[RMDB]
RNA sequence: GGGAACGACUCGAGUAGAGUCGAAAAUUUGAAAGGGGUCUCCUAGAGAGCUUGGCCGUCGGGCCUUACACCCCGACUUGCUGAGUUUCUCUAGGAGAGUCCCUUUCCCAGCCAGAGGUGGCUGGUCUUCAGUACCAUGAUUCGUCAUGGUACUGAAAAAAGAAACAACAACAACAAC
Reactivity to DMS in 0.01 (KOAc 150mM, MgCl2 10mM, bicine 150mM(pH8.5), 24C), signal-to-noise 6, nucleotides 027 to 126: u030u020u020g010a010a010a030g010g010g010g010u000c000u000c000c000u010a000g000a000g000a020g010c010u000u000g010g010c000c300g000u000c000g010g000g000c110c050u000u050a100c300a170c300c000c000c000g010a010c010u010u020g010c010u010g010a000g010u000u020u000c000u000c000u010a000g000g000a000g010a000g010u040c000c000c000u000u000u000c010c000c000a000g000c010c000a040g000a200g010g010u010g000g010c000u000g000g000u010c060
Reactivity to 2A3 in 0.01 (KOAc 150mM, MgCl2 10mM, bicine 150mM(pH8.5), 24C), signal-to-noise 3, nucleotides 027 to 126: u090u050u110g000a000a000a000g000g000g010g020u000c000u000c000c000u000a000g000a000g000a000g010c010u010u000g000g000c000c010g000u000c000g010g010g000c010c000u030u070a080c080a030c020c000c000c000g000a000c010u150u300g000c000u000g000a010g010u040u130u020c000u000c000u000a000g000g000a000g000a000g000u000c000c000c000u000u000u000c000c000c000a000g000c000c000a070g020a080g220g280u090g030g000c000u000g000g030u000c030
Structure probing data (DMS and 2A3) for a 177-nucleotide construct. The RNA was probed in 150 mM KOAc, 10 mM MgCl2 and 150 mM bicine (pH 8.5) at 24 C. It was measured as part of the RMDB libraries RFM100 and RFMREP. DMS adducts were read by reverse transcription with MarathonRT.